[RMDB]
RNA sequence: GGGAACGACUCGAGUAGAGUCGAAAAGAGAGCACGGCAGAUAGCGAGACGAGCUCUUUCUACGAAGAAGCAUUCCAUCAGAUGCUGAUGGCGAGGAGAUCCCUCAUUUCGAUGGCACUGUCUCGUGGCCACCAUGGUAUUUCGAUACCAUGGUGGCAAAAGAAACAACAACAACAAC
Reactivity to 2A3 in 0.01 (KOAc 150mM, MgCl2 10mM, bicine 150mM(pH8.5), 24C), signal-to-noise 5, nucleotides 027 to 126: g140a000g000a000g000c040a020c070g050g000c040a030g080a220u160a080g040c020g030a010g030a030c040g040a010g010c000u000c000u020u050u010c050u080a100c020g060a090a060g050a060a010g070c050a070u120u090c060c020a040u040c000a030g200a200u150g130c070u050g030a090u080g020g040c060g020a020g000g030a090g010a050u020c010c000c000u010c020a050u020u050u050c120g030a100u060g050g000c050a020c110u010g020u030c010u000c020g030u060g100
Reactivity to DMS in 0.01 (KOAc 150mM, MgCl2 10mM, bicine 150mM(pH8.5), 24C), signal-to-noise 2, nucleotides 027 to 126: g000a120g020a070g020c000a140c090g000g000c070a030g020a070u090a160g000c000g000a030g060a010c020g000a040g050c000u000c000u030u030u000c030u000a220c050g000a110a030g000a140a080g000c080a150u020u000c110c100a060u020c050a000g020a130u000g010c090u030g010a090u000g010g000c160g030a060g030g010a110g000a080u020c060c060c000u000c040a110u000u000u000c120g000a060u020g020g000c080a050c040u000g000u000c010u020c020g000u010g010